The data come from the RNA Mapping Database (RMDB), library 15KLIB. Structure probing data (2A3 and DMS) for a 170-nucleotide construct.
[RMDB]
RNA sequence: GGGAACGACUCGAGUAGAGUCGAAAAUCCCCCGCGAUUCUUCUUCGACUCGGCCCGGCUCAUUUCGGCAAAGGGCGGCGGUCCUUAGUUCUCUUACUCUUUUCUGUAAAGAGGAGACUGUAGGAUCAAAGAUCCGAGUUCGCUCGGAUCAAAAGAAACAACAACAACAAC
Reactivity to 2A3 in 0.01 (KOAc 150mM, MgCl2 10mM, bicine 150mM(pH8.5), 24C), signal-to-noise 9, nucleotides 027 to 129: u010c000c000c000c000c020g030c030g040a060u020u020c010u070u000c010u060u090c030g040a050c020u010c010g040g010c000c010c000g030g000c020u030c070a170u060u180u130c070g040g000c040a100a080a110g040g010g000c010g030g040c050g000g000u000c000c000u020u010a010g030u240u070c000u000c000u040u150a150c000u020c000u050u080u100u070c130u220g270u290a010a030a000g010a000g030g000a000g010a000c000u040g060u070a010g000g010a000u010c000a020a080a020
Reactivity to DMS in 0.01 (KOAc 150mM, MgCl2 10mM, bicine 150mM(pH8.5), 24C), signal-to-noise 9, nucleotides 027 to 129: u040c040c010c020c040c040g040c020g000a080u010u010c020u000u010c000u000u000c060g020a040c040u020c020g030g010c000c040c020g040g000c040u040c070a160u030u040u030c110g030g050c120a000a100a080g040g020g000c050g020g030c090g000g000u000c000c010u030u010a020g020u030u030c020u040c000u020u040a300c050u020c000u000u000u000u000c210u100g040u110a030a030a020g020a040g000g000a000g000a020c020u000g000u030a020g020g010a050u000c030a010a170a090
The reactions ran in a buffer of 150 mM KOAc, 10 mM MgCl2 and 150 mM bicine (pH 8.5), at 24 C.